[RMDB]
RNA sequence: GGGAACGACUCGAGUAGAGUCGAAAAGAUAUGGACAAGAACUACUGCUUAGGAAUUCGUUUGACGACGUUGCAGGUCGGAAACGACCUGCAACGUCCGAGAAUUCUAAGCAGCUUGUCCUAAGUCACUUUAAUAUUGUCUUCGGACAAUAUUAAAGAAAAGAAACAACAACAACAAC
Reactivity to DMS in 0.01 (KOAc 150mM, MgCl2 10mM, bicine 150mM(pH8.5), 24C), signal-to-noise 1, nucleotides 027 to 126: g010a080u010a300u000g000g000a030c000a010a000g010a070a040c060u020a300c010u000g000c000u000u000a030g010g010a010a010u000u000c000g010u010u020u020g020a230c300g000a020c000g070u000u000g000c000a000g000g090u030c040g000g030a070a090a240c030g030a050c020c000u030g020c000a000a010c000g030u000c020c000g000a060g020a020a000u000u000c000u000a020a010g010c000a010g000c000u000u010g000u000c000c000u000a010a060g000u000c020a250